[RMDB]
RNA sequence: GGGAACGACUCGAGUAGAGUCGAAAACUGAUUCUCCUUUGAUACGACUAGCUUCAUCAGGAUUCGCUAUUCGAAAUUUACAAAAUACACCGCCCUAUCUUGCUACAGAAAUCUUUCUAUCAAAAUACGAUUUAUGCUGUUUCGACAGCAUAAAUCGAAAAGAAACAACAACAACAAC
Reactivity to DMS in 0.01 (KOAc 150mM, MgCl2 10mM, bicine 150mM(pH8.5), 24C), signal-to-noise 1, nucleotides 027 to 126: c040u000g000a200u020u020c110u000c020c050u000u000u000g000a070u000a140c040g010a050c170u000a020g010c050u020u000c020a160u010c060a120g000g020a120u010u000c040g020c040u000a030u000u000c060g010a080a140a060u000u030u020a100c170a050a020a020a060u010a100c100a110c070c100g000c030c020c040u010a060u000c020u000u000g000c040u000a010c060a040g010a070a110a080u020c060u000u000u020c000u000a100u000c070a130a130a050a110u010a100
Reactivity to 2A3 in 0.01 (KOAc 150mM, MgCl2 10mM, bicine 150mM(pH8.5), 24C), signal-to-noise 2, nucleotides 027 to 126: c020u050g030a120u090u020c020u020c000c000u120u250u080g050a060u090a160c010g000a010c010u010a020g040c010u110u020c020a110u040c020a070g140g030a100u040u130c050g010c000u010a070u080u000c010g060a090a070a070u190u170u050a160c060a000a180a050a020u120a040c040a040c040c000g000c010c000c000u000a020u040c020u050u050g050c010u060a060c010a040g110a060a030a030u010c020u000u010u000c020u050a150u150c050a110a080a140a040u140a070
The data come from the RNA Mapping Database (RMDB), library OK2TST. This 177-nucleotide RNA was probed chemically with DMS and 2A3. DMS adducts were read by reverse transcription with MarathonRT. The DMS profile rests on 661 reads. The RNA was probed in 150 mM KOAc, 10 mM MgCl2 and 150 mM bicine (pH 8.5) at 24 C.